The data come from the RNA Mapping Database (RMDB), library RNAMAK. Structure probing data (2A3 and DMS) for a 207-nucleotide construct.
RNA sequence: GGGAACGACUCGAGUAGAGUCGAAAACACGUCUCCUUCGGGAGACGUGAAAAAACCUUUGUGAGUGUGCUCAAUGACGCACAUCUGAGCCCAUUGGGCUCUGUGUAAGACAGAGCAGACUCACUCUGGUAAAAACCGAUGUGUUCGCACAUCGGAACACAGAUAUACUGUUCGCAGUAUAUCUGUGAAAAGAAACAACAACAACAAC
Reactivity to 2A3 in 0.01 (KOAc 150mM, MgCl2 10mM, bicine 150mM(pH8.5), 24C), signal-to-noise 5, nucleotides 027 to 156: c000a000c000g000u000c000u010c050c020u030u130c250g090g000g010a000g000a000c000g000u000g010a000a000a000a000a000a000c010c010u010u020u010g000u020g000a020g000u150g010u010g110c000u010c030a190a270u110g030a040c050g040c010a010c020a040u070c210u090g000a010g010c010c020c090a300u190u300g010g000g010c000u000c000u010g010u000g010u020a150a060g040a100c080a040g050a000g020c000a000g060a000c000u000c000a000c000u000c000u010g000g010u090a100a060a070a040a010c000c000g000a000u010g020u020g020u020u130c290g030c120a000c000a000u000c010g000g000a030a000
Reactivity to DMS in 0.01 (KOAc 150mM, MgCl2 10mM, bicine 150mM(pH8.5), 24C), signal-to-noise 2, nucleotides 027 to 156: c010a010c000g010u000c000u000c060c000u000u000c250g040g030g030a020g020a000c010g030u000g010a000a010a070a110a110a030c010c000u000u000u000g040u000g010a060g010u000g010u000g010c010u000c030a190a120u010g010a180c220g010c040a030c010a030u000c090u000g010a040g020c000c000c020a300u000u010g000g030g060c000u000c000u000g050u000g000u000a070a150g020a210c050a110g020a030g020c010a050g000a010c010u010c000a030c010u000c020u000g030g030u000a020a050a090a100a130c000c000g000a030u000g010u000g030u000u010c300g040c010a010c000a010u000c000g030g020a010a090
2A3 is a SHAPE reagent: it acylates the 2'-hydroxyl of flexible nucleotides of all four kinds.
DMS adducts were read by reverse transcription with MarathonRT.